[RMDB]
RNA sequence: GGGAACGACUCGAGUAGAGUCGAAAAGAUAUGGAUCGUGUACAGAGCGUUGAAACUAAUCGGAAACGAUUAGUGGAGCUCGUACCGAUCCUAAGUCAAAACUGUGUGAAUCUUCGGAUUCACACAGGUUGAUUUCGUCCUUCGGGACGAAAUCAACAAAAGAAACAACAACAACAAC
Reactivity to 2A3 in 0.01 (KOAc 150mM, MgCl2 10mM, bicine 150mM(pH8.5), 24C), signal-to-noise 1, nucleotides 027 to 126: g020a010u060a030u160g000g010a000u030c040g000u060g000u300a080c180a250g120a020g070c040g220u300u040g030a020a000a000c000u000a020a000u010c010g020g040a020a010a070c020g020a000u000u010a000g020u020g020g010a020g020c000u000c010g010u000a000c020c010g000a000u000c010c000u010a010a010g030u000c050a000a000a160a210c020u020g020u000g000u010g010a030a010u000c020u010u060c300g160g000a000u000u020c030a000c000a000c000a000g040
Reactivity to DMS in 0.01 (KOAc 150mM, MgCl2 10mM, bicine 150mM(pH8.5), 24C), signal-to-noise 1, nucleotides 027 to 126: g010a010u000a290u000g010g000a010u000c000g000u020g040u000a000c020a300g000a030g020c010g030u010u030g010a230a130a020c020u000a000a010u010c010g000g000a050a020a080c020g000a020u000u000a000g020u000g000g000a050g010c000u000c040g010u000a000c010c000g020a010u000c020c020u000a000a010g010u010c020a070a090a080a300c000u000g030u000g010u000g010a050a010u000c000u010u030c200g020g010a020u000u000c000a010c000a000c000a000g000